[RMDB]
RNA sequence: GGGAACGACUCGAGUAGAGUCGAAAACAACAACAAUACAGCAGUCAAUUAUUUCACAGAUCUUCCUUCAAAUUUCAAAGACUCUUAUCUUAAAGCACCGGAAGCACUCACAUGGGUACAGCACUGGCUUGUCGCGUCAUUUCGAUGACGCGACAAGAAAAGAAACAACAACAACAAC
Reactivity to 2A3 in 0.01 (KOAc 150mM, MgCl2 10mM, bicine 150mM(pH8.5), 24C), signal-to-noise 2, nucleotides 027 to 126: c030a000a030c030a050a100c000a010a120u220a170c040a060g000c000a000g020u070c020a020a100u120u290a040u000u230u170c070a080c020a030g090a240u070c000u030u000c040c000u040u170c100a000a070a210u010u100u120c120a000a170a000g070a200c000u000c000u240u040a040u070c070u030u140a250a090a000g060c000a020c000c000g060g000a060a040g000c000a000c000u030c050a070c030a080u080g000g020g000u110a020c010a020g040c000a000c020u000g010g000